[RMDB]
RNA sequence: GGGAACGACUCGAGUAGAGUCGAAAACUCGGGACGCUGCGGCGGGACGACGUGGUGCACCGGGUCGUGGUCGCGCAACGCGCGGUACAUCGGCCACGGAUUCGGCCAGGUUUCGGCGGUGGCGAGCGCAUAGCCUUGUCUUCGGACAAGGCUAUGCAAAAGAAACAACAACAACAAC
Reactivity to 2A3 in 0.01 (KOAc 150mM, MgCl2 10mM, bicine 150mM(pH8.5), 24C), signal-to-noise 2, nucleotides 027 to 126: c010u020c000g010g040g050a020c030g000c030u070g000c030g240g000c020g000g000g080a030c030g040a010c030g180u050g050g010u080g100c030a040c040c030g050g010g000u000c010g010u000g000g030u040c020g000c020g010c120a190a240c250g000c050g010c010g050g020u060a200c030a060u090c030g010g000c010c020a110c010g000g000a030u160u090c020g050g010c000c000a060g070g010u030u000u040c090g090g000c020g050g010u020g000g070c010g000a020g050c060
Reactivity to DMS in 0.01 (KOAc 150mM, MgCl2 10mM, bicine 150mM(pH8.5), 24C), signal-to-noise 1, nucleotides 027 to 126: c020u000c000g020g000g020a200c030g010c030u010g050c030g010g040c030g000g000g000a060c100g040a090c050g020u000g020g000u000g000c150a110c000c050g060g000g030u000c020g030u010g000g000u000c000g010c010g020c030a160a090c210g010c010g010c000g000g040u010a050c040a050u010c000g030g000c000c010a120c000g000g010a130u000u000c180g000g020c010c000a080g000g000u000u000u000c030g010g040c010g050g030u030g000g020c010g030a110g000c090